[RMDB]
RNA sequence: GGGAACGACUCGAGUAGAGUCGAAAAACAAGCUGCACGUGCGUGCGAGCAGUUUUCGAAAUCGCACGUUUGACGUAAAGACGCAACUCUACUCGAGAAAGCGAGUCACGCAGACAGCGUCAAGGAACGAGAACUGAUUGUUCGCAAUCAGUUCUCGAAAAGAAACAACAACAACAAC
Reactivity to DMS in 0.01 (KOAc 150mM, MgCl2 10mM, bicine 150mM(pH8.5), 24C), signal-to-noise 2, nucleotides 027 to 126: a180c240a090a090g010c020u010g000c290a010c050g050u000g000c060g000u000g040c000g000a010g000c110a120g020u000u000u000u000c120g000a040a060a100u000c030g050c000a030c020g000u000u010u000g030a020c030g000u000a030a130a040g000a210c050g000c050a090a100c000u000c000u000a010c000u000c020g010a040g000a060a050a060g010c110g020a100g030u000c060a050c070g010c030a070g000a100c120a080g000c020g010u000c060a040a090g010g010a040a100
Reactivity to 2A3 in 0.01 (KOAc 150mM, MgCl2 10mM, bicine 150mM(pH8.5), 24C), signal-to-noise 2, nucleotides 027 to 126: a020c050a000a110g040c000u060g000c050a030c020g030u030g070c000g000u000g000c000g000a030g070c090a040g010u000u090u090u180c050g000a080a050a020u030c000g010c000a000c000g010u020u010u180g090a010c010g010u050a060a020a000g000a010c090g000c050a010a070c010u000c000u000a020c000u020c000g000a000g000a010a010a000g000c000g010a020g040u080c010a020c130g010c030a020g080a150c100a040g010c000g010u000c030a030a050g090g050a110a010
Chemical mapping of a 177-nucleotide RNA with DMS and 2A3.
Reactivities are rounded to 0.1 and cut off at 0 and 3.
Reactivities are given for positions 27 through 126.
Source: RMDB library M2PK90, as collected in RNAgym.
The reactions ran in a buffer of 150 mM KOAc, 10 mM MgCl2 and 150 mM bicine (pH 8.5), at 24 C.